[RMDB]
RNA sequence: GGGAACGACUCGAGUAGAGUCGAAAAAGUAGACGCCGCUGCUGACGGUAUCUUGUUGCACAUCGCCGUCAAGCACGAUCCCCCAGUUCGUGAAAGGUGGUGUCGUUUCAAAAGGUGCCUCGCUCAACAUCAGCCGUCCAUUCGUGGACGGCUGAUGAAAAGAAACAACAACAACAAC
Reactivity to 2A3 in 0.01 (KOAc 150mM, MgCl2 10mM, bicine 150mM(pH8.5), 24C), signal-to-noise 2, nucleotides 027 to 126: a000g130u120a010g000a000c000g010c000c000g010c120u090g000c020u000g000a000c020g000g030u040a110u090c100u070u150g120u100u080g050c050a040c050a130u070c110g000c000c000g000u000c090a030a020g060c010a000c030g000a070u050c040c020c000c000c000a020g010u030u070c000g040u040g050a120a100a030g050g020u000g040g010u010g000u000c000g010u020u040u130c070a040a050a010a000g110g020u000g000c010c000u100c000g010c000u070c060a060a030

Background:
Structure probing data (2A3) for a 177-nucleotide construct. It was measured as part of the RMDB library OK1LIB. The RNA was probed in 150 mM KOAc, 10 mM MgCl2 and 150 mM bicine (pH 8.5) at 24 C. For 2A3, 843 sequencing reads were counted.